[RMDB]
RNA sequence: GGGAACGACUCGAGUAGAGUCGAAAACCUUUGAUGUUUCCCAGCCAGGGAUGGUCUUCCUCUAGCUUCUUGAUUUUCUUCUUUUCCUUCCGGAGGUCUUUCUCGAGAUCCUCAGCUUUUUUCCUUGCGCUCACCCACUUCUCGAGGACCUCUUCUCACAUCAUGCUUACUUCGGUAAGCAUGAUGUAAAAGAAACAACAACAACAAC
Reactivity to 2A3 in 0.01 (KOAc 150mM, MgCl2 10mM, bicine 150mM(pH8.5), 24C), signal-to-noise 1, nucleotides 027 to 156: c000c000u030u030u220g060a060u090g020u010u070u000c000c000c000a000g020c020c020a010g000g040g000a040u030g020g030u010c030u070u040c010c000u000c030u060a030g000c030u060u030c000u080u170g110a150u060u090u060u040c000u020u060c010u130u100u000u020c040c000u130u060c080c040g060g010a000g000g020u000c000u040u220u100c010u010c000g010a000g010a030u020c020c020u040c080a030g030c040u090u160u040u040u100u170c040c000u070u180g030c050g010c020u030c050a080c020c070c000a080c060u040u030c010u010c000g020a010g000g000a000c000c020u000c000u040u010c030u010c010
Source: RMDB library VIROID, as collected in RNAgym. Chemical mapping of a 207-nucleotide RNA with 2A3. 2A3 adducts were read by reverse transcription with SuperScript II with manganese.